Notes
This 177-nucleotide RNA was probed chemically with 2A3. For 2A3, 478 sequencing reads were counted. It was measured as part of the RMDB library RFM100. The RNA was probed in 150 mM KOAc, 10 mM MgCl2 and 150 mM bicine (pH 8.5) at 24 C.
RNA sequence: GGGAACGACUCGAGUAGAGUCGAAAAGAAAGAAACUGCUGUGAUGAGCCGUAACACAUAAGGAGGCCAACCGAUCAAUUGGUUCUUCAAUGAAAUACUCUUGUUACGCUUGGCUUCUGAGCAUUAAGUCCAACGAGGCUUUCGAGCCUCGUUGGACAAAAGAAACAACAACAACAAC
Reactivity to 2A3 in 0.01 (KOAc 150mM, MgCl2 10mM, bicine 150mM(pH8.5), 24C), signal-to-noise 2, nucleotides 027 to 126: g030a000a060a000g120a040a030a030c110u120g000c090u080g070u070g150a200u060g060a000g040c000c050g000u000a000a000c000a000c010a270u050a150a060g000g030a000g000g050c020c000a000a000c030c000g120a200u040c040a030a170u000u000g020g010u060u200c000u000u030c060a040a030u090g220a170a040a110u170a240c000u030c020u090u100g000u130u010a030c000g000c120u060u000g010g000c000u170u030c050u140g080a000g000c000a000u210u090a140a030